[RMDB]
RNA sequence: GGGAACGACUCGAGUAGAGUCGAAAAGCGGCCCAACACCUCCCAGAUGAAUCCCACGACGGGCAGGUCCUUGCCGGCCUCGGCGUCGGGGAUCUCGAUGCGGUGCGCGUCGACGCCCUUGCCGGCCGCCCAUAGCCGUGUUCGCACGGCUAUGGGCAAAAGAAACAACAACAACAAC
Reactivity to 2A3 in 0.01 (KOAc 150mM, MgCl2 10mM, bicine 150mM(pH8.5), 24C), signal-to-noise 2, nucleotides 027 to 126: g070c050g000g040c050c080c080a040a020c000a040c040c000u060c010c000c000a010g030a090u190g000a110a010u060c000c010c030a250c100g040a030c130g000g010g040c050a050g070g000u090c000c050u240u260g050c100c080g000g040c000c010u040c040g120g040c000g000u020c000g000g000g000g000a010u020c000u000c000g080a080u150g000c040g030g110u100g040c050g000c000g280u020c000g000a100c000g040c000c000c000u030u050g070c000c010g000g000c010c000